An RNA of 207 nucleotides, treated with 2A3 and read out base by base. Conditions: 150 mM KOAc, 10 mM MgCl2 and 150 mM bicine (pH 8.5), 24 C. Values cover nucleotides 27 to 156. For 2A3, 1,079 sequencing reads were counted.
[RMDB]
RNA sequence: GGGAACGACUCGAGUAGAGUCGAAAAAGUUACUUCGGUAACUAUCGACGGGGUCACGGAGGAAUAGAGGGACAUGCUCUGAAGCCUCCACGGAGCAACAGCCUACCCACCUAUCAUCCGUGACGGAGGCACCCUAAGUAUUGGUUUCGACCAAUAAGGUUACACGAUGAUUCGUCAUCGUGUAACCAAAAGAAACAACAACAACAAC
Reactivity to 2A3 in 0.01 (KOAc 150mM, MgCl2 10mM, bicine 150mM(pH8.5), 24C), signal-to-noise 2, nucleotides 027 to 156: a000g030u020u000a030c020u050u120c300g180g010u000a000a000c000u010a040u120c090g070a060c080g110g000g080g000u020c000a010c000g020g000a030g050g060a160a100u170a230g230a300g040g030g000a010c010a100u060g000c000u000c000u010g040a080a010g010c000c000u000c020c010a000c000g000g000a000g000c010a030a120c050a150g070c030c050u200a190c090c010c040a210c030c060u000a040u050c020a080u040c000c000g000u030g000a000c010g000g000a000g000g010c000a020c000c010c000u130a160a060g070u080a120u020u000g000g070u040u110u200c170g130a030c000c000a000a010u120a070a100